Structure probing data (DMS and 2A3) for a 207-nucleotide construct. Reactivities are given for positions 27 through 156. Conditions: 150 mM KOAc, 10 mM MgCl2 and 150 mM bicine (pH 8.5), 24 C. Source: RMDB library OK3TST, as collected in RNAgym.
RNA sequence: GGGAACGACUCGAGUAGAGUCGAAAAUAAUGCAUAGUGAUACACUUGAGCUGUUUUGAUGUUCCAGGAAUUGAGUGUUCUUGUGGUAUGUUUUACAGUCCUUAUUUACCUAUAAACAUAUGCCACACUUGGAUAGUUGUUGCUACAAGUGGGCAAAAUUAGUCCCAUGAUUCGUCAUGGGACUAAUAAAAGAAACAACAACAACAAC
Reactivity to DMS in 0.01 (KOAc 150mM, MgCl2 10mM, bicine 150mM(pH8.5), 24C), signal-to-noise 2, nucleotides 027 to 156: u000a110a080u000g040c040a100u010a160g030u000g020a140u000a070c070a040c060u000u010g010a080g030c040u010g000u020u000u000u000g010a100u000g010u000u000c050c020a110g010g010a080a120u000u000g020a160g010u000g020u000u000c040u000u010g070u000g010g040u000a040u000g010u000u000u010u010a040c070a060g020u010c030c050u000u000a100u000u010u000a070c040c010u020a130u000a050a050a050c070a060u000a050u000g040c000c000a050c020a030c030u010u010g000g010a100u000a090g000u000u010g010u010u000g010c000u010a050c010a040a020g020u000g000g000g000c010a030a010a070
Reactivity to 2A3 in 0.01 (KOAc 150mM, MgCl2 10mM, bicine 150mM(pH8.5), 24C), signal-to-noise 2, nucleotides 027 to 156: u090a020a010u070g050c040a070u080a180g030u070g100a040u090a150c050a000c060u090u070g020a020g000c000u020g040u190u040u090u140g060a080u090g010u080u070c070c020a000g010g060a020a080u060u060g010a040g080u100g030u060u000c000u020u110g060u040g060g000u060a010u090g030u090u080u010u000a070c060a040g110u130c010c050u140u060a060u120u210u130a120c010c030u150a120u170a140a090a000c030a070u200a170u160g000c000c020a130c000a000c050u000u000g030g020a070u010a080g000u000u000g020u040u070g000c020u040a070c000a020a010g000u010g000g030g070c000a030a110a000